Conditions: 150 mM KOAc, 10 mM MgCl2 and 150 mM bicine (pH 8.5), 24 C. An RNA of 207 nucleotides, treated with DMS and 2A3 and read out base by base. For DMS, 3,261 sequencing reads were counted.
[RMDB]
RNA sequence: GGGAACGACUCGAGUAGAGUCGAAAAGCGUACUACAGUUAUCAACGUGUAUUUCCCAGAGGUUCGUCGGGUAUCCCAAAUAGGAUAUCUCUAGCGUGCGAACACUCUGGGUAAACCGCUGAACCAACUGUAUCGCAAAGACUAGUUCGCUAGUCAACUUUUGAACACGAUUCGUCGUGUUCAAAAGAAAAGAAACAACAACAACAAC
Reactivity to DMS in 0.01 (KOAc 150mM, MgCl2 10mM, bicine 150mM(pH8.5), 24C), signal-to-noise 1, nucleotides 027 to 156: g000c010g070u000a090c120u000a020c030a060g020u000u000a140u000c000a020a030c030g020u000g000u010a190u000u000u000c000c000c040a020g050a000g030g020u020u000c000g050u000c050g020g000g000u000a010u000c000c000c020a050a200a300u000a070g000g020a030u000a000u010c000u000c060u000a100g020c180g000u010g010c000g010a020a030c000a030c000u000c040u010g000g000g040u000a010a040a020c020c000g010c000u000g000a030a150c080c020a010a010c010u000g000u010a000u000c000g020c000a080a120a080g010a020c010u000a010g000u000u010c240g040c020u000a010g030u010c000a030a070
Reactivity to 2A3 in 0.01 (KOAc 150mM, MgCl2 10mM, bicine 150mM(pH8.5), 24C), signal-to-noise 6, nucleotides 027 to 156: g010c000g040u080a120c060u000a000c020a010g010u020u000a020u040c010a010a010c010g090u130g010u270a300u030u040u050c000c000c000a010g000a010g010g000u010u000c010g010u010c030g010g000g010u000a010u000c020c030c020a180a300a120u270a130g000g000a000u010a010u010c080u040c060u160a080g120c050g160u240g010c010g010a000a000c150a240c020u000c000u000g000g000g000u000a010a000a000c010c000g000c010u000g010a040a070c100c030a030a000c010u010g020u020a030u300c010g000c010a040a050a000g000a000c000u000a000g010u040u120c260g010c120u010a000g000u000c010a030a060